[RMDB]
RNA sequence: GGGAACGACUCGAGUAGAGUCGAAAACAAAUAGCUGUCACCUUCAUAGAUUCCUCAUGACCUGAGAGCCAUUUUUCUCAAGCCCUUUUUUGCUUGUGACAAACAUAAGUACAUAGUGUAAAGCAGUAUAAGGUCAAUGGUUUUUUAGUCCUCGCUGCGUACGCGGCAUAUUCGUAUGCCGCGUACGAAAAGAAACAACAACAACAAC
Reactivity to 2A3 in 0.01 (KOAc 150mM, MgCl2 10mM, bicine 150mM(pH8.5), 24C), signal-to-noise 1, nucleotides 027 to 156: c020a000a080a010u070a050g030c000u000g070u100c020a040c030c040u040u070c040a060u040a090g030a130u110u080c020c010u020c030a030u170g040a090c000c070u020g020a020g000a010g020c030c030a080u050u020u000u080u000c040u060c050a050a010g000c000c000c030u000u070u040u000u130u210g010c000u030u010g020u050g020a090c010a010a090a000c000a020u140a120a000g040u110a030c030a040u180a080g020u040g040u240a070a050a060g010c010a000g010u110a080u010a180a000g010g020u000c000a050a000u020g030g000u000u000u040u040u070u140a040g010u070c020c040u050c070g000c020u100g000